[RMDB]
RNA sequence: GGGAACGACUCGAGUAGAGUCGAAAAGUACAUGAUCAUAUACGGAAUAAUUGAAGAAAAAGAAAGGGAGAUGAAGUAUUCAUCUUUAGAGACUAAACCUUCAUCAAAGGCCAAUGCACCGAGAGCCUGAGACGAAGUAUUUCGAUACUUCGUCUCAAAAAGAAACAACAACAACAAC
Reactivity to DMS in 0.01 (KOAc 150mM, MgCl2 10mM, bicine 150mM(pH8.5), 24C), signal-to-noise 1, nucleotides 027 to 126: g020u000a100c050a090u010g000a080u000c050a060u000a120u000a090c090g000g020a130a130u030a080a060u000u000g000a060a110g000a070a050a100a140a050g000a030a070a110g020g000g000a050g000a000u000g000a030a150g010u000a080u000u000c060a060u000c000u000u010u010a130g000a120g020a120c050u000a000a100a170c250c010u010u010c020a000u010c100a150a130a050g000g000c020c050a090a030u000g030c070a050c040c030g020a080g000a190g000c060c090